RNA sequence: GGGAACGACUCGAGUAGAGUCGAAAAUUACUACAUGCACCAUCUAGAGUUACCUAAUGCAUUACACACAGGAACUGACCUAAUGGGUGAGUUUUAUGGUGGUUAUAUAGAUGAAGAGGUUGCUCAGUGACACGAUACCUUUCGAGGUAUCGUGUCAAAAAGAAACAACAACAACAAC
Reactivity to DMS in 0.01 (KOAc 150mM, MgCl2 10mM, bicine 150mM(pH8.5), 24C), signal-to-noise 2, nucleotides 027 to 126: u010u010a090c060u020a100c110a060u000g000c130a080c090c060a110u000c040u000a030g020a010g000u000u000a020c030c010u000a110a130u000g020c070a020u000u000a090c030a010c010a080c000a070g000g010a000a000c000u000g030a030c000c000u010a090a090u000g000g030g040u000g000a030g010u000u000u000u000a070u020g010g040u000g000g000u000u010a080u010a100u010a130g000a040u010g000a130a060g010a030g000g000u000u000g010c010u000c000a170g000
Reactivity to 2A3 in 0.01 (KOAc 150mM, MgCl2 10mM, bicine 150mM(pH8.5), 24C), signal-to-noise 1, nucleotides 027 to 126: u140u030a090c050u050a030c010a100u160g090c050a050c000c010a110u020c070u110a020g000a010g030u000u030a000c000c010u010a000a090u180g090c010a000u030u160a030c000a000c000a000c000a000g010g000a000a020c010u040g070a030c010c030u090a250a090u280g020g000g000u020g100a020g030u000u110u000u000a170u020g070g020u020g010g000u110u000a150u020a020u050a120g080a040u060g000a030a030g030a010g190g000u030u010g000c000u000c020a060g080